Background: Structure probing data (DMS and 2A3) for a 177-nucleotide construct. For 2A3, 8,116 sequencing reads were counted. The RNA was probed in 150 mM KOAc, 10 mM MgCl2 and 150 mM bicine (pH 8.5) at 24 C. Source: RMDB library TTRDES, as collected in RNAgym.

RNA sequence: GGGAACGACUCGAGUAGAGUCGAAAAGAUAUGGAUGAAAGGAGACAUGCUCCGAUCGGAAACGAUCGUCGAGCAACAGCUCCGAUCAUCCUAAGUCAAAAGAUGUUAAGCUUCGGCUUAACAUCAAGUCCAAAGAAUUGUUCGCAAUUCUUUGGACAAAAGAAACAACAACAACAAC
Reactivity to DMS in 0.01 (KOAc 150mM, MgCl2 10mM, bicine 150mM(pH8.5), 24C), signal-to-noise 4, nucleotides 027 to 126: g000a030u010a300u010g010g010a000u010g000a020a050a300g010g000a020g010a080c130a230u000g010c000u000c000c000g000a020u000c010g000g000a120a070a170c010g000a010u000c000g010u000c300g000a000g010c000a010a070c300a120g000c010u000c000c000g000a300u000c000a000u000c000c000u010a030a080g000u010c020a080a100a100a060g010a010u000g000u000u000a000a000g010c000u000u030c300g030g010c020u000u000a000a000c000a010u000c000a040a060
Reactivity to 2A3 in 0.01 (KOAc 150mM, MgCl2 10mM, bicine 150mM(pH8.5), 24C), signal-to-noise 3, nucleotides 027 to 126: g020a010u050a020u100g010g000a010u000g010a000a030a030g000g030a010g010a080c210a240u100g000c010u000c010c010g000a000u010c000g000g040a050a020a000c000g000a010u020c020g280u220c170g020a000g040c000a030a070c120a040g060c000u010c000c000g000a000u000c000a000u000c000c000u000a010a010g010u000c010a050a030a060a170g010a010u020g000u000u010a010a000g000c020u050u220c300g140g000c000u020u010a000a010c000a000u000c010a000a010